This 177-nucleotide RNA was probed chemically with 2A3. Values are in units of 0.01, from 0 to 300, in steps of 10. The RNA was probed in 150 mM KOAc, 10 mM MgCl2 and 150 mM bicine (pH 8.5) at 24 C. The data come from the RNA Mapping Database (RMDB), library RFM100.
RNA sequence: GGGAACGACUCGAGUAGAGUCGAAAAACAAAACUCUCAUGGCAUGGAGAAAAAAAACUCAAAUUGAAAUCGAAGGAGAAAUAACAUUUGAUAAAUGUUUUUUUCCCCUUUUUGAUUUAGGGUUCUUUAGCACAAAGGUAUUCGUACCUUUGUGCUAAAAAGAAACAACAACAACAAC
Reactivity to 2A3 in 0.01 (KOAc 150mM, MgCl2 10mM, bicine 150mM(pH8.5), 24C), signal-to-noise 2, nucleotides 027 to 126: a000c050a040a120a020a030c020u000c000u030c040a090u070g170g000c050a050u110g030g030a050g000a100a010a000a000a020a000a000a010c050u050c050a060a030a110u100u090g010a060a010a010u060c060g030a030a050g020g000a030g000a000a000a000u080a010a010c000a000u030u020u060g160a150u210a150a040a010u010g000u000u030u000u030u000u000u010c010c000c000c010u010u020u030u060u160g000a000u000u020u050a110g010g020g010u040u040c030u000u020